This 207-nucleotide RNA was probed chemically with 2A3. The RNA was probed in 150 mM KOAc, 10 mM MgCl2 and 150 mM bicine (pH 8.5) at 24 C. Reactivities are given for positions 27 through 156. The data come from the RNA Mapping Database (RMDB), library RNAMAK. For 2A3, 930 sequencing reads were counted.
[RMDB]
RNA sequence: GGGAACGACUCGAGUAGAGUCGAAAAGUGCCCUUCGGGGCACAAAAAAGAUAUGGACUCGAUCCGUGUGGAGGCUAUGUAGUGGUCGGAAACGACCAUGAAAGCCGAUGAAACACGGAGUCGAGUCCUAAGUCAAAAAGCGCUCUUCGGAGCGCAAGCAGAUUAUUACUUUCGAGUAAUAAUCUGCAAAAGAAACAACAACAACAAC
Reactivity to 2A3 in 0.01 (KOAc 150mM, MgCl2 10mM, bicine 150mM(pH8.5), 24C), signal-to-noise 1, nucleotides 027 to 156: g000u010g030c000c010c050u000u080c300g030g000g010g120c010a030c020a020a110a040a000a000a000g060a020u110a060u160g000g000a000c000u020c010g010a010u000c000c000g000u000g050u010g110g000a060g010g000c000u050a040u180g000u000a010g010u000g000g030u000c020g000g000a000a080a000c000g000a020c050c000a000u010g010a020a000a000g020c000c000g030a140u010g000a010a000a000c000a000c000g000g010a010g000u030c000g020a000g000u010c000c000u000a000a000g000u010c000a030a030a030a030a030g110c150g050c040u050c000u020u100c250g130g010a000g000c040g030c000a000a000